[RMDB]
RNA sequence: GGGAACGACUCGAGUAGAGUCGAAAACGAUACGGGUCAGGAACAUCUUCAUCUGUUCGAUGGUGGUGUUCUGGCUCUCAUCGAGAAUGAUAAACGCGUCGUUCAGCGUACGACCACGCAUAUAGGCAUCGUACCGCUCGUUCGCGAGCGGUACGAUAAAAGAAACAACAACAACAAC
Reactivity to DMS in 0.01 (KOAc 150mM, MgCl2 10mM, bicine 150mM(pH8.5), 24C), signal-to-noise 1, nucleotides 027 to 126: c000g010a000u000a210c140g010g000g000u000c000a020g020g020a000a040c000a000u000c000u080u000c000a010u010c010u010g000u000u010c250g000a010u000g030g000u010g020g030u000g010u000u000c000u020g000g000c020u000c000u000c100a030u000c000g020a180g010a060a110u000g030a060u000a030a120a070c030g040c130g000u000c000g000u000u000c030a140g020c070g020u000a030c020g000a220c000c000a110c130g020c050a140u020a060u010a090g010g020c070
Reactivity to 2A3 in 0.01 (KOAc 150mM, MgCl2 10mM, bicine 150mM(pH8.5), 24C), signal-to-noise 2, nucleotides 027 to 126: c000g010a010u010a050c030g020g030g010u000c000a040g150g060a020a000c020a010u020c000u010u040c000a030u000c020u050g210u300u220c140g010a010u010g000g000u010g000g010u040g000u010u000c000u000g010g020c000u000c000u000c020a010u010c000g020a060g080a070a110u240g040a040u090a020a090a020c020g000c030g000u050c020g020u060u060c020a050g060c000g030u050a010c020g020a070c070c110a050c020g070c090a030u110a040u110a180g170g020c040